[RMDB]
RNA sequence: GGGAACGACUCGAGUAGAGUCGAAAACGCAUGUCGGGAAAGUCUUACUAAGUGCAUCAAAUAGCACCGUUACACUUUGAGCCAUAGAUGUAUCAAGAAGCAGAAGGACUUGAACCUUCACGAGAUACAAGUACUUCUUAUUCGUAAGAAGUACUUGAAAAGAAACAACAACAACAAC
Reactivity to 2A3 in 0.01 (KOAc 150mM, MgCl2 10mM, bicine 150mM(pH8.5), 24C), signal-to-noise 9, nucleotides 027 to 126: c040g010c060a050u090g030u070c040g010g010g050a050a050a040g020u010c020u060u060a080c040u080a110a060g010u030g020c010a040u050c090a120a110a190u160a050g010c010a010c030c020g070u070u080a040c060a020c040u050u060u150g050a030g030c000c000a050u080a080g110a110u070g030u050a090u080c020a050a050g050a070a010g070c080a030g010a070a010g040g010a030c010u060u110g050a130a100c000c000u010u020c020a010c040g120a130g010a050u140a110
Reactivity to DMS in 0.01 (KOAc 150mM, MgCl2 10mM, bicine 150mM(pH8.5), 24C), signal-to-noise 9, nucleotides 027 to 126: c090g010c090a060u000g010u010c070g000g000g010a100a050a070g010u000c040u000u000a100c070u010a090a100g020u000g010c020a070u000c130a070a090a130u000a080g010c030a030c040c100g010u000u010a070c140a050c060u000u000u000g000a110g010c040c050a080u000a080g010a070u000g010u000a030u000c050a080a100g000a080a090g020c130a090g000a050a030g000g010a100c070u000u010g010a110a120c020c000u000u000c020a100c110g000a130g010a110u010a090